[RMDB]
RNA sequence: GGGAACGACUCGAGUAGAGUCGAAAAAGCACCAUCUGCGUAGGCUUGAGGUUUAAGACUUGCGUCGCCUACGGUCUUGGAUAGCCCCCGCCAGGCAGGGACCCCAAUCUUUAAAACGGAGCGGCAACGUAUAGCAGAAGUUCGCUUCUGCUAUACGAAAAGAAACAACAACAACAAC
Reactivity to 2A3 in 0.01 (KOAc 150mM, MgCl2 10mM, bicine 150mM(pH8.5), 24C), signal-to-noise 3, nucleotides 027 to 126: a010g030c020a020c020c010a050u050c060u220g100c030g030u020a000g000g010c030u040u160g050a040g050g050u070u110u140a160a050g090a060c030u050u140g070c150g110u070c020g000c000c000u010a030c020g010g000u030c020u020u070g020g050a080u050a120g030c000c000c000c000c000g040c030c000a010g030g030c020a010g000g000g060a040c010c000c010c000a010a080u010c030u020u210u110a090a060a020a020c020g010g020a020g020c010g010g000c010a030a040
Reactivity to DMS in 0.01 (KOAc 150mM, MgCl2 10mM, bicine 150mM(pH8.5), 24C), signal-to-noise 3, nucleotides 027 to 126: a050g010c110a190c000c010a040u000c030u000g000c040g030u000a050g000g010c010u000u020g010a030g010g020u000u000u010a090a070g020a040c040u000u000g010c100g010u000c150g010c010c010u010a020c020g000g000u010c020u000u000g010g000a090u000a140g000c000c030c010c020c050g010c060c030a070g010g010c050a050g000g000g000a120c040c000c000c020a050a080u010c050u010u000u000a050a040a090a140c200g010g000a040g010c060g000g020c080a060a150